[RMDB]
Chemical mapping of a 170-nucleotide RNA with 2A3 and DMS. The reactions ran in a buffer of 150 mM KOAc, 10 mM MgCl2 and 150 mM bicine (pH 8.5), at 24 C.

RNA sequence: GGGAACGACUCGAGUAGAGUCGAAAACUCCAACCUACUGACAAUUCUACAACUGUUAGUGUUACUGUAUCCAGUAACAUGGUUGAAACUGUUGUGGGUCAACUUGAGCAAACUAAUAUGCAUAGUCACACCCGAACGUUCGCGUUCGGGAAAAGAAACAACAACAACAAC
Reactivity to 2A3 in 0.01 (KOAc 150mM, MgCl2 10mM, bicine 150mM(pH8.5), 24C), signal-to-noise 5, nucleotides 027 to 129: c010u030c000c020a040a040c020c000u090a090c110u040g020a020c020a070a060u160u050c040u110a040c010a040a020c010u050g040u200u110a040g000u040g000u050u010a010c000u020g080u150a110u150c180c000a000g000u010a000a000c020a000u010g030g010u070u060g050a060a010a000c020u010g000u000u000g000u010g000g000g020u040c060a080a120c040u060u150g080a050g130c010a000a010a210c050u100a040a070u100a080u160g020c030a020u050a060g050u080c010a010c000a010
Reactivity to DMS in 0.01 (KOAc 150mM, MgCl2 10mM, bicine 150mM(pH8.5), 24C), signal-to-noise 2, nucleotides 027 to 129: c060u060c010c040a100a020c000c100u050a090c090u000g070a060c000a090a110u020u010c170u020a130c040a010a010c030u030g030u000u060a000g090u010g050u000u050a020c000u000g020u080a200u110c240c040a120g000u010a000a000c000a000u000g000g210u000u010g030a090a130a110c000u020g010u040u040g000u000g000g000g050u000c090a090a120c080u080u070g040a080g070c000a090a010a060c110u090a060a140u010a000u050g000c090a120u030a060g000u000c050a140c000a060